Structure probing data (2A3) for a 207-nucleotide construct. The data come from the RNA Mapping Database (RMDB), library RSTRND. 2A3 is a SHAPE reagent: it acylates the 2'-hydroxyl of flexible nucleotides of all four kinds.
[RMDB]
RNA sequence: GGGAACGACUCGAGUAGAGUCGAAAAAGGUUGGCGAACGUUCCAUCGAGAUGCAGGUCGAGAGGGAGUCCACUCUCGUAAAUCUAGGCUCAAAAAAAUAGAUGCAAACAACAUCGUACCUUUCGCUCGUAAAACUGCACCUGUUGCAGCAUAAAACGUUUCUUUCCCUGUUCGCAGGGAAAGAAACAAAAGAAACAACAACAACAAC
Reactivity to 2A3 in 0.01 (KOAc 150mM, MgCl2 10mM, bicine 150mM(pH8.5), 24C), signal-to-noise 1, nucleotides 027 to 156: a000g030g020u040u020g060g020c080g070a150a050c030g060u070u060c040c050a090u120c070g000a050g000a030u120g020c040a010g050g060u050c000g000a000g000a000g020g000g040a040g030u030c010c000a050c010u000c000u000c000g110u110a040a040a000u020c050u040a000g050g040c010u000c000a040a120a000a000a000a000a000u150a020g010a000u080g070c100a110a030a030c010a030a060c000a050u020c020g080u020a080c000c000u040u030u110c050g030c040u010c050g060u070a000a000a100a100c000u000g000c000a010c010c110u130g140u100u010g000c000a000g040c040a040u220a110a130a010a010c020
Values cover nucleotides 27 to 156.